RNA sequence: GGGAACGACUCGAGUAGAGUCGAAAACUCAAUGUAGGGAAUAACAUUGAAUUGAUACAAAUACCUUUUUCGGUGUAGGGAAAAACACCGAAUUGAUACAAAUACCUUGCUCAAUGUAGGGAAUAACAAAACAGGCAUCGCUUCGGCGAUGCCUGAAGCUGUUAUAAGACUUCGGUCUUAUAACAGCAAAAGAAACAACAACAACAAC
Reactivity to 2A3 in 0.01 (KOAc 150mM, MgCl2 10mM, bicine 150mM(pH8.5), 24C), signal-to-noise 2, nucleotides 027 to 156: c010u000c000a000a010u020g010u030a090g020g120g060a150a140u120a120a020c010a020u000u040g050a120a030u080u130g030a080u120a250c070a050a120a040u160a080c000c000u000u020u010u000u030c000g000g000u000g000u010a000g010g010g090a130a100a160a010a000c000a000c000c010g010a000a000u010u010g000a000u020a010c020a010a070a000u060a080c000c000u010u010g050c040u080c170a130a100u190g030u020a030g000g010g040a020a050u070a120a020c080a030a060a010a010c010a010g000g000c030a010u000c010g070c040u070u100c200g080g010c000g000a000u000g000c000c000u000g000a000a000
This 207-nucleotide RNA was probed chemically with 2A3. As a SHAPE reagent, 2A3 marks flexible, mostly unpaired nucleotides at the ribose 2'-OH. Conditions: 150 mM KOAc, 10 mM MgCl2 and 150 mM bicine (pH 8.5), 24 C. Values cover nucleotides 27 to 156.